[RMDB]
RNA sequence: GGGAACGACUCGAGUAGAGUCGAAAAACGUCUUCCAGCGUCUUCGGCGCUUCAUCAGUGAUCGCUACGGUAGCGAAGUCAUCGCCCAGGUCUUCGAAGCCGGUGAACAGAUUCUCUGCUGCGUUCACAGUUAUGAUAGAUUCGUCUAUCAUAACUGAAAAGAAACAACAACAACAAC
Reactivity to 2A3 in 0.01 (KOAc 150mM, MgCl2 10mM, bicine 150mM(pH8.5), 24C), signal-to-noise 9, nucleotides 027 to 126: a010c030g040u020c030u100u020c030c010a030g000c010g030u020c020u120u090c080g040g000c020g000c000u080u070c030a110u040c020a030g050u010g080a040u030c020g010c050u090a070c050g080g050u050a020g100c010g020a020a000g040u030c020a040u070c060g070c010c020c000a020g040g010u000c000u040u020c050g030a060a020g020c010c010g040g030u050g030a050a020c020a040g050a100u120u030c040u010c010u060g040c020u040g000c030g040u040u050c060a040
Reactivity to DMS in 0.01 (KOAc 150mM, MgCl2 10mM, bicine 150mM(pH8.5), 24C), signal-to-noise 9, nucleotides 027 to 126: a080c090g010u000c060u000u000c090c070a110g010c050g010u000c040u010u000c100g020g000c040g010c060u000u000c070a050u000c070a080g010u000g000a050u000c020g010c030u010a100c080g010g010u000a070g020c020g000a030a050g010u000c040a050u000c100g010c020c020c020a150g010g000u000c010u000u000c020g010a090a090g010c020c010g000g010u000g010a060a090c100a090g000a120u000u000c040u000c020u000g010c050u000g010c050g000u000u000c050a150